[RMDB]
RNA sequence: GGGAACGACUCGAGUAGAGUCGAAAAGAUUCCUGUUCGCAGGAAUCAAAAAAUCCUAAGUCUAGUCCGAUGAGGCUUCUUUGAUCUGGGUCGGAAACGACCCAGGGAGAAGACCGAGGACUAGAUAUGGAAAAAAACGACGGAUUCGUCCGUCGAAUAAUAACACUAGAUUCGUCUAGUGUUAUUAAAAAGAAACAACAACAACAAC
Reactivity to DMS in 0.01 (KOAc 150mM, MgCl2 10mM, bicine 150mM(pH8.5), 24C), signal-to-noise 2, nucleotides 027 to 156: g000a010u000u030c010c000u000g010u030u000c280g040c000a040g000g000a010a020u000c000a000a010a100a070a100a090u000c010c010u010a100a250g020u000c010u000a010g000u000c000c000g010a230u000g020a240g030g020c040u000u000c000u000u010u000g000a240u000c000u000g000g060g030u010c000g040g010a200a140a250c000g010a030c020c000c000a000g000g000g000a300g010a060a030g000a060c010c000g000a160g050g000a060c000u000a000g010a000u000a130u000g030g000a000a010a040a080a080a030a150c010g030a020c020g020g000a070u000u020c300g020u000c020c010g020u010c000g010a030a050
Reactivity to 2A3 in 0.01 (KOAc 150mM, MgCl2 10mM, bicine 150mM(pH8.5), 24C), signal-to-noise 3, nucleotides 027 to 156: g010a000u000u000c000c000u000g020u030u070c210g010c040a000g000g020a000a000u020c030a020a010a010a000a000a010u030c030c000u050a130a030g010u010c000u010a030g010u000c010c020g260a300u180g080a090g090g000c030u030u010c000u100u140u060g060a050u050c000u010g000g010g020u010c020g010g070a190a110a120c030g000a020c010c040c000a000g010g010g000a010g000a000a000g060a270c000c030g050a060g000g000a000c000u000a000g000a000u010a020u000g010g060a000a130a040a010a020a030a030c020g020a000c000g010g000a010u040u060c160g050u060c080c000g010u000c010g000a000a020